[RMDB]
RNA sequence: GGGAACGACUCGAGUAGAGUCGAAAAGUUUCCGGGUUCGCCCGGAAACAAAGUGUGUGUGAAAAAGAGAGAGAGAAAAACACACAGACAAACUCUCUCUCAAAAGAGAAGUCUUCGGACUUCUCAACACUUGACAAUACUUCGGUAUUGUCAAGUGAAAAGAAACAACAACAACAAC
Reactivity to 2A3 in 0.01 (KOAc 150mM, MgCl2 10mM, bicine 150mM(pH8.5), 24C), signal-to-noise 1, nucleotides 027 to 126: g000u000u010u000c000c000g000g000g020u040u040c150g060c030c020c020g000g050a000a000a000c000a010a000a020g020u010g000u000g000u020g000u020g140a170a060a040a270a000g020a000g000a010g000a000g000a000g060a030a160a020a020a000c050a000c000a000c020a050g120a050c060a020a190a120c010u010c000u000c000u000c000u000c000a020a090a010a010g010a000g000a010a000g000u000c000u010u090c300g040g020a010c000u000u000c000u000c010a010a000
Reactivity to DMS in 0.01 (KOAc 150mM, MgCl2 10mM, bicine 150mM(pH8.5), 24C), signal-to-noise 1, nucleotides 027 to 126: g010u000u020u000c000c000g010g000g020u000u000c240g000c000c020c020g010g000a000a000a000c000a110a040a060g010u000g000u000g040u010g000u000g010a110a090a050a110a130g020a010g010a010g000a010g010a030g010a090a070a080a100a030c020a000c040a020c000a050g000a120c150a100a050a090c000u000c000u000c000u000c000u000c000a010a000a060a210g000a000g000a010a010g000u000c000u020u000c150g000g000a000c000u000u000c000u010c000a050a100
Structure probing data (2A3 and DMS) for a 177-nucleotide construct. The reactions ran in a buffer of 150 mM KOAc, 10 mM MgCl2 and 150 mM bicine (pH 8.5), at 24 C. The DMS profile rests on 876 reads. It was measured as part of the RMDB library M2PK50.